[RMDB]
RNA sequence: GGGAACGACUCGAGUAGAGUCGAAAAACGUUCAACGACUAAGUGGCCAGGCUUGGAUUUUGCCUGAUCCCAAAGCCAUCCUUCUCCCCACUGUGCUGCGAACGGACUGAAGUGAGGGAGGCAGGGGAACAGAUGCCGUUUUCGAACGGCAUCUGUUAAAAGAAACAACAACAACAAC
Reactivity to DMS in 0.01 (KOAc 150mM, MgCl2 10mM, bicine 150mM(pH8.5), 24C), signal-to-noise 1, nucleotides 027 to 126: a040c060g020u000u000c040a070a110c160g000a030c060u060a130a220g000u080g000g010c170c080a040g000g000c020u000u010g010g000a210u000u000u020u000g020c020c000u000g010a110u000c020c020c030a070a060a100g010c060c040a110u020c020c000u000u000c020u000c010c000c000c030a020c030u030g010u010g000c060u000g030c140g030a030a060c100g010g010a120c170u000g010a090a020g020u010g010a040g000g010g000a060g000g010c250a020g000g000g010g000